[RMDB]
This 177-nucleotide RNA was probed chemically with DMS and 2A3. The DMS profile rests on 3,427 reads. The reactions ran in a buffer of 150 mM KOAc, 10 mM MgCl2 and 150 mM bicine (pH 8.5), at 24 C. For 2A3 the reverse transcriptase was SuperScript II with manganese.

RNA sequence: GGGAACGACUCGAGUAGAGUCGAAAACUCUUCAGUUUCGACUGAAGAGAAAGCCGAUGGUAGUGUGGGGUCUCCCCUUGCGAGAGUAGGGAACUGCCAGGAAAAGUGUACGAUUCGUCGUACACAACUUACGGACAUUGUUCGCAAUGUCCGUAAGAAAAGAAACAACAACAACAAC
Reactivity to DMS in 0.01 (KOAc 150mM, MgCl2 10mM, bicine 150mM(pH8.5), 24C), signal-to-noise 3, nucleotides 027 to 126: c010u010c000u020u000c000a020g010u000u000u000c180g010a030c000u010g000a020a010g000a000g000a050a070a130g000c010c010g010a160u010g020g000u000a020g020u010g010u000g000g000g010g020u010c070u000c030c030c010c020u010u000g020c080g010a150g000a130g020u000a050g010g000g000a080a050c030u010g010c010c020a100g020g000a040a060a080a120g010u000g010u000a000c010g010a020u000u010c270g030u000c000g010u000a000c010a000c000a050a050
Reactivity to 2A3 in 0.01 (KOAc 150mM, MgCl2 10mM, bicine 150mM(pH8.5), 24C), signal-to-noise 3, nucleotides 027 to 126: c010u000c000u000u010c010a010g000u020u020u220c200g160a020c000u010g000a010a010g010a000g010a050a010a000g070c000c010g090a110u070g010g050u020a030g010u030g030u090g060g040g050g100u030c080u110c020c000c000c000u020u070g020c030g040a080g010a020g070u130a040g000g000g000a010a040c010u050g030c020c000a040g120g100a050a150a040a060g000u000g000u000a000c000g000a020u020u070c210g040u000c000g000u110a010c000a000c000a000a010